[RMDB]
RNA sequence: GGGAACGACUCGAGUAGAGUCGAAAAUUAUUGCUGAGCUGACUGUAACUGACUCAAUAACAAAUCUAAUCGUGUAUUGCACUGGAAAAGAAAUAUUCUUAUUAUGUAUUUUCUCCAAAUAAUGGCCUAUUGAGACCCUUUUCGAAGGGUCUCAAUAAAAAGAAACAACAACAACAAC
Reactivity to 2A3 in 0.01 (KOAc 150mM, MgCl2 10mM, bicine 150mM(pH8.5), 24C), signal-to-noise 2, nucleotides 027 to 126: u050u000a020u000u110g060c050u090g020a080g010c040u050g060a100c090u120g070u240a190a050c040u030g180a020c000u020c060a000a090u060a110a040c070a050a020a070u000c000u130a040a020u010c060g000u040g000u000a300u060u180g060c000a000c000u020g020g060a030a180a000a000g030a000a060a000u160a020u070u070c020u100u120a160u190u000a020u210g000u020a030u040u110u140u000c000u000c000c010a080a000a000u020a000a070u170g080g000c000c000
Reactivity to DMS in 0.01 (KOAc 150mM, MgCl2 10mM, bicine 150mM(pH8.5), 24C), signal-to-noise 1, nucleotides 027 to 126: u070u000a070u000u040g000c120u000g020a080g000c030u000g000a090c080u060g000u050a040a160c060u040g000a010c020u000c000a010a100u010a100a080c150a060a020a090u070c090u060a090a110u000c060g020u000g000u000a090u000u000g020c070a050c110u000g000g000a080a030a010a080g000a110a060a110u000a060u020u050c050u000u020a070u010u000a070u000g000u010a030u000u000u000u000c000u000c010c070a090a060a040u020a050a080u050g000g010c100c000